[RMDB]
RNA sequence: GGGAACGACUCGAGUAGAGUCGAAAAGGGUGAUGUCUCCUAACCUUUAUCAAUGGGGGCACUCGGUCGUGCUGUGGGUAGAAAUUUUAUUUCGUGCCUACCUUAGACGCUGGUCGUCGGGAGUAUGUGGGACUGAUGAACUUCGGUUCAUCAGUAAGAGUGUGGUCAGAUUCGUCUGACCACACUCAAAAGAAACAACAACAACAAC
Reactivity to 2A3 in 0.01 (KOAc 150mM, MgCl2 10mM, bicine 150mM(pH8.5), 24C), signal-to-noise 2, nucleotides 027 to 156: g040g000g010u120g020a120u020g020u000c010u010c050c010u020a060a070c000c040u230u150u250a230u100c110a080a090u100g000g000g000g000g000c000a010c010u020c040g040g010u030c040g020u030g070c010u120g000u030g030g000g010u030a040g100a050a080a050u240u230u300u300a150u190u010u130c050g030u160g030c000c000u000a010c010c010u040u030a000g030a010c060g010c090u070g120g000u250c010g010u000c020g050g030g000a070g050u060a040u150g030u090g020g030g010a000c010u000g000a000u000g000a010a000c000u010u000c140g080g000u000u000c000a000u000c000a000g000u010a000a030